[RMDB]
Source: RMDB library OK2TST, as collected in RNAgym. This 177-nucleotide RNA was probed chemically with 2A3 and DMS. 2A3 adducts were read by reverse transcription with SuperScript II with manganese. The reactions ran in a buffer of 150 mM KOAc, 10 mM MgCl2 and 150 mM bicine (pH 8.5), at 24 C.

RNA sequence: GGGAACGACUCGAGUAGAGUCGAAAACGCCGAGAGGUCAUCAACAAAGACGUGCACAACCCUUGCGUCACCUCGAUCGGCCAUUGCUUUCAGGAACAGGGAAGGAGAGGGAUUGUCGCGCACACGGGUGGUAGGAGUAUUUCGAUACUCCUACCACAAAAGAAACAACAACAACAAC
Reactivity to 2A3 in 0.01 (KOAc 150mM, MgCl2 10mM, bicine 150mM(pH8.5), 24C), signal-to-noise 3, nucleotides 027 to 126: c040g020c010c010g010a030g000a000g030g050u050c050a090u050c040a100a110c030a070a170a020g050a040c030g030u050g030c090a030c040a110a140c030c020c000u030u170g020c020g010u050c020a010c010c010u010c000g050a170u040c010g020g000c000c010a080u060u150g040c050u070u060u140c040a030g130g000a120a080c030a050g070g010g050a060a030g000g040a090g030a030g000g020g020a030u010u070g040u060c040g000c010g000c040a010c000a020c080g130g040
Reactivity to DMS in 0.01 (KOAc 150mM, MgCl2 10mM, bicine 150mM(pH8.5), 24C), signal-to-noise 3, nucleotides 027 to 126: c150g050c030c010g040a090g010a050g010g000u000c160a100u010c210a110a100c140a060a060a060g010a050c040g020u000g060c130a090c150a090a090c070c030c010u000u000g000c050g010u000c060a040c020c000u010c010g010a090u000c000g000g000c000c120a080u000u000g000c070u000u010u000c090a100g000g020a030a090c080a060g000g000g000a070a060g000g000a140g020a060g000g000g000a090u000u010g010u000c070g020c070g000c070a100c080a040c130g000g010